[RMDB]
RNA sequence: GGGAACGACUCGAGUAGAGUCGAAAACAGCGGAACAGUAUGUAGUAACCAGGAUUGAAAAGGGUAGUGAUGACGACGAAUUCACCUUUGCCAUCACGGCUACACAGUACGAUCCGAACAAGUAUGACGCGAUCGAUAAUGGGGUAAUUACCGAUGGAAGCUUGUUACACUUCGGUGUAACAAGCUUAAAAGAAACAACAACAACAAC
Reactivity to 2A3 in 0.01 (KOAc 150mM, MgCl2 10mM, bicine 150mM(pH8.5), 24C), signal-to-noise 2, nucleotides 027 to 156: c050a020g000c000g010g010a080a000c000a090g130u210a100u080g100u120a030g020u020a000a000c000c010a020g130g000a040u070u190g020a130a020a040a040g020g000g010u000a070g070u000g110a000u040g020a020c040g000a000c040g020a040a070u160u130c020a220c000c010u010u000u030g050c010c000a010u020c010a040c020g000g000c000u010a000c060a010c000a050g050u130a040c000g000a000u000c000c000g140a000a050c040a080a090g080u080a080u140g040a070c070g000c040g010a020u030c000g000a000u040a040a020u090g020g000g000g000u000a020a100u110u140a020c030c010g040a000u030g050g050
Reactivity to DMS in 0.01 (KOAc 150mM, MgCl2 10mM, bicine 150mM(pH8.5), 24C), signal-to-noise 1, nucleotides 027 to 156: c080a110g040c030g010g010a030a200c030a150g000u000a060u000g010u010a110g000u010a060a070c020c030a280g030g010a060u000u010g000a010a090a120a120g000g000g010u010a070g080u000g070a040u000g000a100c010g050a110c040g020a120a130u000u030c140a090c070c080u000u010u010g000c010c030a040u000c030a030c030g010g030c000u000a040c010a040c040a090g000u000a070c050g030a020u020c000c010g000a070a090c110a050a100g010u000a100u000g000a200c000g020c050g020a010u020c040g020a060u000a070a080u020g040g020g060g000u000a040a140u000u000a050c050c020g050a100u030g010g000

Annotation
This 207-nucleotide RNA was probed chemically with 2A3 and DMS. Values cover nucleotides 27 to 156. For 2A3, 784 sequencing reads were counted.